RNA sequence: GGGAACGACUCGAGUAGAGUCGAAAAACACCAAAACUGAAAACGGAAGGCAAUCCUUCCACGACGAUACUUACUUGCCUUUGAUCGUCGUUACUACUGGCAUAGCCACAAAGGAGAACAAACAUGAGCGCGGACACUGACUUCGGUCAGUGUCCAACCAAUUGGGAACGUUCGCGUUCCCAAUUGGAAAAGAAACAACAACAACAAC
Reactivity to DMS in 0.01 (KOAc 150mM, MgCl2 10mM, bicine 150mM(pH8.5), 24C), signal-to-noise 1, nucleotides 027 to 156: a130c090a080c030c030a060a050a130a300c140u010g020a070a080a080a010c020g020g000a030a000g070g010c220a060a050u000c020c040u000u000c020c020a150c000g000a010c020g000a060u000a100c040u000u000a080c060u020u000g010c160c160u000u000u010g000a030u010c000g060u000c000g000u020u000a060c050u000a080c060u000g020g020c100a130u000a080g010c040c080a120c030a030a060a100g000g030a110g000a100a140c130a060a040a130c050a030u000g000a150g010c060g060c100g000g020a020c000a040c000u020g010a040c000u000u000c300g120g030u000c000a010g050u000g020u000c010c000a000a080
Reactivity to 2A3 in 0.01 (KOAc 150mM, MgCl2 10mM, bicine 150mM(pH8.5), 24C), signal-to-noise 4, nucleotides 027 to 156: a000c050a100c010c020a030a030a040a080c140u200g120a080a040a020a030c090g010g000a000a000g030g020c170a040a140u230c000c010u010u030c010c010a000c000g000a000c000g000a010u140a250c030u030u050a030c020u060u180g040c010c030u070u020u070g020a000u010c010g000u000c000g020u020u050a010c030u040a030c010u010g010g000c050a170u120a100g010c020c010a040c060a010a090a030g070g000a060g030a110a040c060a060a060a040c050a110u170g040a030g080c150g000c050g050g000a000c000a000c000u030g020a000c000u010u030c160g050g000u000c010a000g000u000g000u000c000c000a000a000
This 207-nucleotide RNA was probed chemically with DMS and 2A3. The DMS profile rests on 1,214 reads. The RNA was probed in 150 mM KOAc, 10 mM MgCl2 and 150 mM bicine (pH 8.5) at 24 C. As a SHAPE reagent, 2A3 marks flexible, mostly unpaired nucleotides at the ribose 2'-OH. For 2A3 the reverse transcriptase was SuperScript II with manganese. For 2A3, 2,419 sequencing reads were counted.